[RMDB]
RNA sequence: GGGAACGACUCGAGUAGAGUCGAAAAUGAAAGAUCCCGAACUGAUUUAUCGGGGCGCAAAAGCGAUGCGUGAGGCGGUGCCUGCGCAUUUGCCAGUCACGGUGAAAAUCCGUCUGGGCUGGGAUUCCGGCGCUCGCCAGUUUGAGAUUGCUGACGCAGUAUGCUUCGAUUUCGAUCGAAGCAUACUAAAAGAAACAACAACAACAAC
Reactivity to DMS in 0.01 (KOAc 150mM, MgCl2 10mM, bicine 150mM(pH8.5), 24C), signal-to-noise 1, nucleotides 027 to 156: u000g030a160a140a120g000a140u000c010c000c000g000a020a100c030u000g020a060u010u000u000a110u020c090g020g040g000g070c020g050c050a050a050a070a090g000c060g010a000u000g000c000g000u010g000a070g020g010c000g000g020u010g030c030c030u000g010c030g000c050a020u000u000u010g070c030c000a080g030u020c010a060c010g030g020u000g000a080a060a300a200u000c020c010g030u000c060u020g020g020g060c040u010g010g010g020a160u000u000c020c010g000g000c000g010c030u010c030g030c050c020a030g010u000u000u000g000a110g000a070u010u010g020c020u010g010a150c030g000c140
Reactivity to 2A3 in 0.01 (KOAc 150mM, MgCl2 10mM, bicine 150mM(pH8.5), 24C), signal-to-noise 2, nucleotides 027 to 156: u240g040a050a040a020g060a040u040c000c000c000g000a030a020c020u040g050a140u130u120u210a130u260c070g010g010g010g000c010g000c010a100a160a020a000g140c040g020a010u010g000c010g040u160g300a020g040g000c170g300g120u220g010c000c010u010g000c000g000c000a010u000u040u090g110c000c000a020g000u040c050a000c010g020g000u020g030a080a000a000a040u010c000c020g010u010c060u180g060g010g000c000u000g010g000g120a100u150u120c080c030g020g000c010g010c020u020c030g030c020c000a010g000u020u020u110g030a050g010a010u070u140g020c060u080g010a050c090g000c100

This 207-nucleotide RNA was probed chemically with DMS and 2A3. The data come from the RNA Mapping Database (RMDB), library OK3TST.